[RMDB]
RNA sequence: GGGAACGACUCGAGUAGAGUCGAAAAGGUGUGUGUACAGUCUGCUAACAUGUGCUGGCGGAUUUGGGAACAGCAGCCCUGCACAUUUGAGAUGAGAUUCCCAGUGGCAGCAAAGUGUCUCCGAGGGCCCAACGUCUGUGUUUAAAGAAGGCAUCCACACCAUUACCUGAUUCGUCAGGUAAUGGUGAAAAGAAACAACAACAACAAC
Reactivity to 2A3 in 0.01 (KOAc 150mM, MgCl2 10mM, bicine 150mM(pH8.5), 24C), signal-to-noise 4, nucleotides 027 to 156: g010g000u030g000u010g000u010g030u060a040c020a040g020u020c020u010g030c010u050a090a040c040a090u110g030u060g050c040u030g040g020c020g050g000a050u100u120u090g030g000g020a070a040c030a040g050c030a010g000c020c000c020u040g010c010a020c010a030u090u090u090g090a080g020a030u070g010a030g030a140u040u050c000c000c010a030g010u060g050g000c020a030g000c030a020a070a060g080u050g020u020c020u000c070c040g030a060g000g000g020c020c000c010a040a030c030g020u010c030u040g070u020g040u060u110u090a070a090a020g050a040a020g010g010c010a020u030c020c020a030
Reactivity to DMS in 0.01 (KOAc 150mM, MgCl2 10mM, bicine 150mM(pH8.5), 24C), signal-to-noise 3, nucleotides 027 to 156: g010g030u000g000u010g030u000g040u000a080c060a100g020u020c000u010g000c030u000a030a030c090a170u020g040u010g030c000u000g000g050c010g020g010a080u000u010u050g010g000g020a120a050c030a100g010c050a150g000c020c030c020u000g030c030a030c020a070u000u010u010g010a110g000a090u010g000a120g000a200u000u000c010c000c010a150g040u010g000g010c010a050g020c030a080a060a130g000u010g010u000c000u010c000c050g020a140g010g000g030c020c020c010a040a050c070g010u000c010u000g030u000g000u000u000u000a090a090a130g000a110a090g000g010c060a090u000c010c030a200